[RMDB]
RNA sequence: GGGAACGACUCGAGUAGAGUCGAAAAGCCAGACUGUGGCACGGCGAUUAUCAACGGCGCGGCGCUCUGUUUUGGUAACGCCGUGCGUCGCGGCAACAUCGGUAUUGUUGGCGCAUCCGGCACCGGAAGGCAUACGACUGUUCGCAGUCGUAUGCCUAAAAGAAACAACAACAACAAC
Reactivity to 2A3 in 0.01 (KOAc 150mM, MgCl2 10mM, bicine 150mM(pH8.5), 24C), signal-to-noise 1, nucleotides 027 to 126: g000c000c010a010g000a080c120u160g020u200g150g000c030a020c020g010g000c010g120a290u000u050a010u000c010a000a030c000g020g010c050g050c100g260g000c080g050c030u060c020u000g100u020u180u160u080g000g030u020a000a000c000g000c000c000g000u000g000c000g030u010c030g010c020g050g050c010a010a010c010a040u120c180g190g020u300a180u140u080g030u020u020g140g090c000g020c010a010u080c030c000g000g010c000a080c000c030g040g080a010
Reactivity to DMS in 0.01 (KOAc 150mM, MgCl2 10mM, bicine 150mM(pH8.5), 24C), signal-to-noise 1, nucleotides 027 to 126: g010c010c010a060g000a090c200u010g020u000g010g000c010a040c000g000g020c010g000a160u000u000a030u000c030a070a040c020g000g010c070g010c100g020g000c200g000c040u010c040u000g000u000u030u000u000g010g010u020a010a050c030g000c000c010g010u000g030c030g000u010c000g000c010g000g000c000a010a020c000a020u000c230g010g000u010a160u010u010g000u000u020g010g010c000g000c040a200u000c010c000g010g000c000a220c060c010g050g000a160